[RMDB]
RNA sequence: GGGAACGACUCGAGUAGAGUCGAAAAAUGUCCCAUGGCAGUUUGAUGCAGGAUGGGACCAACAUUAUAGACCUACUGUUACCUGCUAAAAAAGGCAUUUAGUAUAUUUCACUCCUGAGUCCAGAAAGCCAUUUACCAAGAGCAUAUCUGAAUUUGAUAAAUGAUGCUCAUUCGUGAGCAUCAUUUAAAAAGAAACAACAACAACAAC
Reactivity to DMS in 0.01 (KOAc 150mM, MgCl2 10mM, bicine 150mM(pH8.5), 24C), signal-to-noise 3, nucleotides 027 to 156: a120u010g010u000c000c000c020a150u000g040g010c030a080g020u000u000u010g020a140u000g030c040a070g030g020a080u010g000g010g000a080c020c070a070a100c060a100u010u010a110u010a120g000a120c030c010u000a070c030u000g010u000u000a070c060c000u000g000c060u000a000a060a070a120a130a080g000g010c020a060u000u000u010a050g000u000a100u000a110u000u010u000c050a060c020u000c020c040u000g010a090g020u010c010c030a110g010a070a080a100g000c030c030a100u000u010u000a110c060c040a060a070g010a080g020c050a090u010a100u000c040u000g010a090a120u000u000u000g010a270
Reactivity to 2A3 in 0.01 (KOAc 150mM, MgCl2 10mM, bicine 150mM(pH8.5), 24C), signal-to-noise 5, nucleotides 027 to 156: a000u030g030u010c010c000c010a010u020g020g000c020a030g030u130u260u150g210a120u070g000c010a010g070g120a060u110g020g000g050a020c040c030a080a020c010a030u170u180a080u130a170g080a050c010c000u020a030c010u050g010u080u040a050c010c010u020g040c040u100a050a070a020a010a020a040g020g000c010a020u090u060u060a030g040u030a070u010a050u130u100u050c020a020c030u040c000c010u040g020a020g020u000c010c010a020g060a060a040a010g030c000c000a050u090u060u080a070c040c020a070a020g030a020g020c060a030u080a020u210c050u060g050a140a100u150u110u050g110a070